The record gives the reactivity of an RNA of 177 nucleotides to 2A3 and DMS. Reactivities are rounded to 0.1 and cut off at 0 and 3. The 2A3 profile rests on 2,719 reads.
RNA sequence: GGGAACGACUCGAGUAGAGUCGAAAAGAUAUGGAUGUGCUACUUAUCUUUGAUCUCGGAAACGAGGGAGAUAACUAGUUUCGACAUCCUAAGUCAAAAUCAAGUUUAAGUUCGCUUAAACUUGAAACAAAUCAAUCUGCUUCGGCAGAUUGAUUUGAAAAGAAACAACAACAACAAC
Reactivity to 2A3 in 0.01 (KOAc 150mM, MgCl2 10mM, bicine 150mM(pH8.5), 24C), signal-to-noise 2, nucleotides 027 to 126: g020a010u100a030u190g010g000a010u010g000u010g070c010u000a020c020u040u010a010u060c000u180u210u150g100a090u070c010u010c000g030g090a090a040a040c000g010a000g000g070g000a020g000a000u020a000a040c020u000a030g030u050u200u300c150g050a000c000a000u000c000c010u000a080a040g060u020c060a020a030a020a270u030c000a010a000g000u030u010u020a020a020g010u030u160c250g010c120u000u010a000a010a040c000u020u010g000a030a020a000
Reactivity to DMS in 0.01 (KOAc 150mM, MgCl2 10mM, bicine 150mM(pH8.5), 24C), signal-to-noise 2, nucleotides 027 to 126: g000a050u000a300u020g010g000a000u000g010u000g000c000u000a020c100u000u000a010u010c000u000u000u020g000a080u010c000u000c000g000g000a180a080a210c000g010a000g010g000g010a010g010a010u000a000a010c080u000a020g000u000u000u010c120g020a040c000a010u000c000c010u000a050a090g010u010c070a090a060a100a130u000c000a010a030g000u010u000u000a000a020g010u000u020c280g010c000u000u000a000a010a000c000u020u000g000a020a090a130
The data come from the RNA Mapping Database (RMDB), library TTRDEL.